The record gives the reactivity of an RNA of 207 nucleotides to 2A3.
[RMDB]
RNA sequence: GGGAACGACUCGAGUAGAGUCGAAAAUGACAUUAGGACUUCUUCAAUUAUGGGAUUUUGUUGAAGCUUAUGUAUGUAAUCCAACUAACAAAUGUUUAACUACACAAUUAUUUUUAAUCAUUCAACAUGUGAAAGAUAAUGGUAUUUUUAAGGAGAGUACGUUUUUAUCCUUCGGGAUAAAAACGUAAAAAGAAACAACAACAACAAC
Reactivity to 2A3 in 0.01 (KOAc 150mM, MgCl2 10mM, bicine 150mM(pH8.5), 24C), signal-to-noise 2, nucleotides 027 to 156: u090g010a020c000a000u040u040a040g030g000a070c020u000u000c000u020u000c000a050a030u150u110a120u300g140g030g040a110u080u000u120u030g000u020u010g000a000a000g010c000u000u000a000u020g000u010a030u020g120u060a060a000u040c030c040a000a060c060u150a030a140c020a100a100a000u070g070u000u180u050a000a070c020u120a020c070a010c000a110a050u070u010a060u010u060u010u060u260a110a140u090c020a000u100u120c100a090a090c030a180u110g030u000g050a110a000a000g020a000u020a020a010u040g010g000u070a070u050u120u040u090u110a040a030g060g040a070g030a020g120
2A3 adducts were read by reverse transcription with SuperScript II with manganese. The 2A3 profile rests on 661 reads.